[RMDB]
RNA sequence: GGGAACGACUCGAGUAGAGUCGAAAACGGAGUCCUAGGCACCACAGCUCCGCGUGAUGUCCGAGCAAUGGCAGAGUCCUAGGCAUCGCACCUCUAUCCGGUGUCAAAGCAAUGGCGCAGACCUCAGGCUACCUGGUAUGUUCGCAUACCAGGUAGCAAAAGAAACAACAACAACAAC
Reactivity to DMS in 0.01 (KOAc 150mM, MgCl2 10mM, bicine 150mM(pH8.5), 24C), signal-to-noise 1, nucleotides 027 to 126: c050g000g000a030g000u000c010c000u000a100g030g030c000a280c000c020a090c170a300g030c050u000c010c090g000c100g000u000g000a040u040g040u020c060c170g000a060g000c060a040a100u000g000g000c100a110g000a130g020u010c000c000u000a110g000g000c030a080u000c020g030c070a200c020c040u000c130u000a060u000c110c030g000g020u030g000u020c020a020a040a150g000c120a020a100u000g000g000c040g040c020a110g000a050c010c030u000c090a090g000
Reactivity to 2A3 in 0.01 (KOAc 150mM, MgCl2 10mM, bicine 150mM(pH8.5), 24C), signal-to-noise 1, nucleotides 027 to 126: c000g030g000a000g050u010c010c060u030a030g010g000c000a000c030c010a020c000a030g000c000u020c040c100g010c050g060u150g070a130u080g070u110c000c050g000a060g000c000a020a100u110g010g000c100a080g070a050g270u080c000c000u020a040g000g000c000a040u030c000g000c000a060c000c000u060c000u080a110u090c030c000g060g010u040g000u060c040a050a000a060g000c000a070a070u090g060g000c080g030c030a020g040a120c020c030u060c030a010g010